Structure probing data (DMS and 2A3) for a 177-nucleotide construct.
It was measured as part of the RMDB libraries RFM100 and RFMREP.
For 2A3 the reverse transcriptase was SuperScript II with manganese.
The 2A3 profile rests on 2,978 reads.
DMS adducts were read by reverse transcription with MarathonRT.
RNA sequence: GGGAACGACUCGAGUAGAGUCGAAAAUUCCUAGCAUUCAUUUAUUACUUCUGGAAUUUUAGACCCAGAAAGAUACAACUAUACAAGCCAGAGAGCCAGUCAGAGGGCGCUACCAUGCAAACUAGGGUCCUGUUCUAUUGUUCGCAAUAGAACAGGAAAAAGAAACAACAACAACAAC
Reactivity to DMS in 0.01 (KOAc 150mM, MgCl2 10mM, bicine 150mM(pH8.5), 24C), signal-to-noise 4, nucleotides 027 to 126: u000u000c000c000u000a060g020c100a060u020u020c090a040u010u010u020a050u030u010a160c060u010u010c020u000g000g000a060a070u010u020u040u030a130g010a120c110c010c000a040g000a030a050a100g010a070u010a090c140a050a170c090u020a070u040a090c110a120a070g010c010c040a090g010a090g000a090g000c000c050a060g000u020c050a080g010a100g010g000g000c040g020c030u010a050c040c050a050u000g010c100a050a080a100c060u010a050g020g000g030
Reactivity to 2A3 in 0.01 (KOAc 150mM, MgCl2 10mM, bicine 150mM(pH8.5), 24C), signal-to-noise 5, nucleotides 027 to 126: u020u000c010c010u000a020g020c030a030u060u150c030a070u100u140u110a170u100u140a150c040u020u050c000u030g020g060a060a070u100u060u140u180a160g030a040c010c000c020a010g060a010a090a000g030a010u130a060c060a090a000c070u110a080u050a250c080a080a030g010c010c030a020g020a000g000a000g080c010c010a020g070u080c010a010g020a090g080g000g020c010g000c010u010a080c020c000a040u090g030c060a120a110a040c040u080a070g060g000g060